[RMDB]
RNA sequence: GGGAACGACUCGAGUAGAGUCGAAAAUCUCAGCCCCUCCACCUUGGGGUGCCCUAUCCGAGCACUGCAGUUUCGGUAGAAAGGCUAAGAACCUCGCAAUGAGGUAAGGUGGGACUUUUCCUUCGGGCACUUGAUUUAAGUUCGCUUAAAUCAAGUGAAAAGAAACAACAACAACAAC
Reactivity to DMS in 0.01 (KOAc 150mM, MgCl2 10mM, bicine 150mM(pH8.5), 24C), signal-to-noise 4, nucleotides 027 to 126: u000c010u000c020a300g000c010c000c000c000u000c010c000a020c000c000u000u010g010g000g010g020u010g000c000c000c000u000a150u000c020c020g020a020g010c030a080c120u010g010c210a110g000u010u010u000c010g010g000u000a020g000a080a120a100g000g010c010u010a070a080g020a130a090c000c000u000c000g010c180a120a090u000g000a000g000g000u000a000a010g000g010u010g000g010g010a120c170u010u000u000u000c030c030u000u010c130g010g010g010
Reactivity to 2A3 in 0.01 (KOAc 150mM, MgCl2 10mM, bicine 150mM(pH8.5), 24C), signal-to-noise 2, nucleotides 027 to 126: u010c000u010c010a030g000c000c010c000c000u010c000c010a010c000c010u010u020g000g000g000g040u040g000c000c000c010u010a020u000c000c010g000a010g010c040a040c200u300g020c080a110g010u150u300u040c000g010g020u000a000g030a030a040a000g010g000c010u020a070a010g040a100a060c010c010u010c000g050c150a150a280u300g000a010g000g020u000a010a010g000g000u000g000g000g000a020c020u170u160u120u090c000c000u030u050c120g040g030g000
Chemical mapping of a 177-nucleotide RNA with DMS and 2A3. For DMS the reverse transcriptase was MarathonRT. The RNA was probed in 150 mM KOAc, 10 mM MgCl2 and 150 mM bicine (pH 8.5) at 24 C. Reactivities are given for positions 27 through 126.